[RMDB]
RNA sequence: GGGAACGACUCGAGUAGAGUCGAAAAGUAGAAUCUGUCAAGCAAAACCCCAAAACCUUACACUGAGAGCAUUUAGCCUGAUUACUCUUUAAAUCAAAUCAGGAAAUAGAGAGAAACUCGAGAGGUGAAACGGGAGUAAUGUUCGCAUUACUCCCAACUACGCUAUUCUGUUCGCAGAAUAGCGUAGAAAAGAAACAACAACAACAAC
Reactivity to DMS in 0.01 (KOAc 150mM, MgCl2 10mM, bicine 150mM(pH8.5), 24C), signal-to-noise 1, nucleotides 027 to 156: g000u000a070g000a070a050u000c010u000g040u000c040a020a120g000c070a040a030a150a130c010c020c010c010a070a100a190a170c040c030u000u000a100c030a080c070u020g030a040g000a040g020c070a300u000u000u000a090g000c000c000u000g000a040u000u000a050c040u000c010u020u010u030a060a050a040u000c050a030a090a030u000c020a020g040g010a000a040a210u000a030g000a040g000a100g060a150a060a070c060u000c040g000a080g020a080g030g020u000g010a090a060a110c080g000g000g000a060g050u000a010a000u000g000u000u000c280g000c000a030u010u000a000c010u020c000c000c000a000a020
Reactivity to 2A3 in 0.01 (KOAc 150mM, MgCl2 10mM, bicine 150mM(pH8.5), 24C), signal-to-noise 1, nucleotides 027 to 156: g030u040a030g070a120a110u030c060u140g160u110c070a070a030g020c020a060a070a090a150c010c000c020c060a030a070a030a060c040c020u090u110a040c050a040c120u120g030a020g000a000g030c030a030u010u050u070a100g100c000c000u000g010a010u000u050a070c030u040c050u180u240u130a040a080a060u210c050a030a000a010u000c000a000g010g000a000a060a000u040a000g030a000g010a000g030a060a070a020c040u020c030g050a090g000a010g080g050u060g030a070a030a060c100g000g000g000a010g000u000a000a000u010g020u030u060c180g000c090a000u000u000a000c000u000c000c000c010a000a000

This 207-nucleotide RNA was probed chemically with DMS and 2A3. For DMS, 1,633 sequencing reads were counted. For DMS the reverse transcriptase was MarathonRT. The RNA was probed in 150 mM KOAc, 10 mM MgCl2 and 150 mM bicine (pH 8.5) at 24 C. 2A3 adducts were read by reverse transcription with SuperScript II with manganese. Reactivities are given for positions 27 through 156.